[RMDB]
RNA sequence: GGGAACGACUCGAGUAGAGUCGAAAAUGGAACAAAAUGAUAUUCUUAAUUCAAGUAAUGCAGCACGAGUUGCAGAAGGCGGAUUAGAGUUUGUCCACCCAUUAGAAACUAAACAUAGGCAAAUUGCUCCACUAGGAUUAUUCGUAAUCCUAGUGGAAAAAGAAACAACAACAACAAC
Reactivity to DMS in 0.01 (KOAc 150mM, MgCl2 10mM, bicine 150mM(pH8.5), 24C), signal-to-noise 4, nucleotides 027 to 126: u000g010g000a040a070c020a030a030a060a070u000g000a190u010a060u010u000c010u000u000a170a090u010u000c010a050a300g000u000a070a180u000g020c000a010g020c010a150c290g020a180g020u010u010g020c010a060g010a100a070g000g010c300g010g000a020u000u000a040g000a100g000u000u000u000g010u000c010c030a110c020c000c010a080u000u000a070g010a060a060a100c120u010a050a040a070c180a050u010a030g030g010c060a040a050a130u010u000g010c120
Reactivity to 2A3 in 0.01 (KOAc 150mM, MgCl2 10mM, bicine 150mM(pH8.5), 24C), signal-to-noise 4, nucleotides 027 to 126: u090g000g020a110a050c020a000a090a060a040u120g020a060u060a030u180u020c020u060u100a050a050u030u000c010a060a030g090u040a120a100u070g000c010a000g010c030a020c220g300a300g100u030u000g000c020a010g000a020a010g000g000c020g000g000a020u010u020a020g020a000g020u000u030u030g010u000c020c000a030c010c010c020a000u040u080a090g090a030a130a010c040u110a110a080a050c080a160u120a060g070g000c050a020a130a300u150u170g010c010
The record gives the reactivity of an RNA of 177 nucleotides to DMS and 2A3. Values cover nucleotides 27 to 126. Conditions: 150 mM KOAc, 10 mM MgCl2 and 150 mM bicine (pH 8.5), 24 C.